[RMDB]
RNA sequence: GGGAACGACUCGAGUAGAGUCGAAAAGAGUAAAUAGAGGAGUCAGGGUUCGCACCGGCUCCGCGAACCUAGGGUAACACUGACUCUGGAGCGGAAGAGAGAGCAGACGAAGAUACGUCUGCAUAGACACCGAUACGUGCUUCGGCACGUAUCGGUGAAAAGAAACAACAACAACAAC
Reactivity to 2A3 in 0.01 (KOAc 150mM, MgCl2 10mM, bicine 150mM(pH8.5), 24C), signal-to-noise 1, nucleotides 027 to 126: g090a000g000u300a020a000a220u270a020g050a040g060g000a010g000u000c000a120g140g000g000u060u060c010g000c020a090c000c030g110g000c000u000c010c000g000c000g000a000a010c000c070u030a080g000g030g180u050a020a020c030a070c070u030g050a000c000u020c000u000g000g000a030g000c070g080g110a150a000g070a040g030a000g000a040g040c060a000g000a000c010g020a110a000g080a070u090a190c070g000u000c000u010g000c000a000u030a000g000a000
Reactivity to DMS in 0.01 (KOAc 150mM, MgCl2 10mM, bicine 150mM(pH8.5), 24C), signal-to-noise 1, nucleotides 027 to 126: g000a070g020u010a050a040a110u020a080g000a200g060g000a010g010u000c000a000g020g000g000u000u000c070g000c030a080c130c000g000g010c000u010c020c170g000c010g000a040a040c010c000u070a020g060g000g030u010a040a110c140a300c050u000g000a000c010u020c000u010g000g020a000g050c000g010g000a050a040g050a090g020a090g050a130g020c000a000g020a000c020g000a150a070g000a170u040a110c000g010u000c000u000g000c030a010u000a000g000a150

The record gives the reactivity of an RNA of 177 nucleotides to 2A3 and DMS.
The RNA was probed in 150 mM KOAc, 10 mM MgCl2 and 150 mM bicine (pH 8.5) at 24 C.
The DMS profile rests on 1,428 reads.
In probing experiments dimethyl sulfate is read out at A N1 and C N3, which are open when not base-paired.